[RMDB]
Conditions: 150 mM KOAc, 10 mM MgCl2 and 150 mM bicine (pH 8.5), 24 C. Structure probing data (DMS and 2A3) for a 177-nucleotide construct. For 2A3 the reverse transcriptase was SuperScript II with manganese.
RNA sequence: GGGAACGACUCGAGUAGAGUCGAAAACGUCAGUGAUGAGAUGGCAAGUCUUCAAACGAUAUAUAAAGAUGGAAAACAAGAAUUGUUAUGUGAUGGAGUCCACUCUUAUACUGGACAUAUCGGGGGAUACCAUGGUGGGGUUCGCCCCACCAUGGUAAAAAGAAACAACAACAACAAC
Reactivity to DMS in 0.01 (KOAc 150mM, MgCl2 10mM, bicine 150mM(pH8.5), 24C), signal-to-noise 2, nucleotides 027 to 126: c210g010u020c000a000g000u020g020a040u050g000a110g010a140u010g020g000c090a130a150g020u010c010u000u000c030a000a020a080c050g000a070u030a050u030a100u010a100a050a060g000a030u000g000g010a060a000a060a110c090a010a010g010a270a050u000u000g000u000u000a030u070g040u020g000a160u000g000g040a250g000u020c000c070a070c120u000c040u030u000a100u020a030c020u000g020g000a060c110a040u000a020u000c080g020g000g000g010g000a280
Reactivity to 2A3 in 0.01 (KOAc 150mM, MgCl2 10mM, bicine 150mM(pH8.5), 24C), signal-to-noise 2, nucleotides 027 to 126: c200g000u050c030a170g000u010g070a120u030g070a000g000a030u030g160g020c100a120a120g000u060c070u200u250c050a010a210a000c030g000a000u000a000u060a000u060a070a030a000g230a100u140g060g000a070a120a110a010c140a070a050g070a060a140u000u090g030u040u080a140u190g020u020g040a050u060g000g010a030g050u040c000c000a000c060u000c000u060u000a060u120a160c080u000g110g030a000c000a050u030a060u000c030g000g000g000g020g100a000